[RMDB]
RNA sequence: GGGAACGACUCGAGUAGAGUCGAAAAGGGAGGCUGGCUUGUCGCCGAGAAUACUACCGCAAUGUUAGAAACAGAGGUGGAUGCAGGAUCUUGACAGACAUUGGCCUGGGAUCUUGCCAACCUCUCGUUUUUACAGCAGACUUGGAAACAACCACUCGACGUACAUAUGGUUCGCCAUAUGUACGUCAAAAGAAACAACAACAACAAC
Reactivity to 2A3 in 0.01 (KOAc 150mM, MgCl2 10mM, bicine 150mM(pH8.5), 24C), signal-to-noise 5, nucleotides 027 to 156: g050g030g000a010g020g030c070u040g020g000c050u050u050g030u050c040g000c040c010g010a010g020a040a100u230a140c070u090a090c040c050g030c060a090a080u080g020u140u120a050g000a010a030a010c010a010g000a010g040g010u010g030g060a130u200g000c010a010g010g000a010u020c000u050u130g150a090c010a020g030a010c030a220u160u300g110g010c010c010u010g010g000g000a000u000c000u010u020g000c000c010a040a030c020c000u000c010u000c010g000u000u000u000u010u010a020c020a010g030c020a010g030a100c020u060u060g020g030a070a070a020c010a030a030c020c070a030c050u070c070
Reactivity to DMS in 0.01 (KOAc 150mM, MgCl2 10mM, bicine 150mM(pH8.5), 24C), signal-to-noise 2, nucleotides 027 to 156: g020g000g030a100g000g030c040u000g010g000c030u000u000g040u000c020g020c040c040g010a050g000a110a190u010a250c030u000a130c060c020g000c070a120a110u030g000u000u000a080g010a070a140a040c020a080g000a040g000g010u000g010g010a300u000g040c020a030g000g000a020u000c000u010u000g020a200c040a100g020a050c070a300u000u000g080g050c020c030u020g030g000g020a000u000c030u000u000g040c030c040a300a020c020c000u030c000u000c110g000u020u000u000u020u010a050c060a100g000c020a080g020a090c050u000u000g000g000a170a000a040c020a060a100c040c010a040c140u000c000